[RMDB]
RNA sequence: GGGAACGACUCGAGUAGAGUCGAAAAGAUAUGGACGUCCUGAGGCAACAGCCAUAGGGUCGGAAACGACCCUGAUGGACAUGCCUUGGGACGUCCUAAGUCAAACCUCACUCUUCGGAGUGAGGAACAUGCGGUAGAGGUUCGCCUCUACCGCAUGAAAAGAAACAACAACAACAAC
Reactivity to 2A3 in 0.01 (KOAc 150mM, MgCl2 10mM, bicine 150mM(pH8.5), 24C), signal-to-noise 1, nucleotides 027 to 126: g020a000u020a020u060g000g000a020c010g030u010c000c000u030g010a010g040g000c160a300a080c080a300g000c000c010a000u000a000g030g030g000u010c020g000g030a000a000a000c000g000a000c030c020c010u000g060a060u020g030g050a030c030a080u300g000c040c000u000u000g000g000g030a010c000g000u020c010c000u000a000a000g020u000c000a030a040a060c000c020u010c000a010c000u040c010u030u110c240g300g020a020g030u010g020a010g000g010a020a000
Chemical mapping of a 177-nucleotide RNA with 2A3. It was measured as part of the RMDB library TTRDES. Reactivities are rounded to 0.1 and cut off at 0 and 3. The RNA was probed in 150 mM KOAc, 10 mM MgCl2 and 150 mM bicine (pH 8.5) at 24 C.